RNA sequence: GGGAACGACUCGAGUAGAGUCGAAAAACGAGUCGUACGCGCCUCGAAUGGUAUUGUCGGCGUAAAAGAACAAGACGUCACCGGACGCGACCGGGCUAAAAAGCGAAACGUCAUCUACGGAUGACGAAAAACGGACCUGGGUUCGCCCAGGUCCGAACCUCUGAAUGUUGUUCGCAACAUUCAGAGGAAAAGAAACAACAACAACAAC
Reactivity to 2A3 in 0.01 (KOAc 150mM, MgCl2 10mM, bicine 150mM(pH8.5), 24C), signal-to-noise 1, nucleotides 027 to 156: a010c010g000a000g020u010c010g030u020a030c090g000c020g010c000c010u060c040g050a180a080u190g100g030u240a130u130u090g140u110c050g000g000c020g020u000a100a060a000a030g080a020a020c030a090a000g040a040c000g020u040c000a000c010c000g000g000a000c010g000c010g020a010c000c000g000g000g060c020u020a040a020a000a000a000g030c030g070a150a000a000c000g000u000c000a000u000c000u000a000c200g140g000a000u000g000a000c000g000a060a060a000a000a000c020g020g010a000c000c020u000g000g000g020u010u070c030g120c000c000c000a000g000g000u000c000c000g000a000a000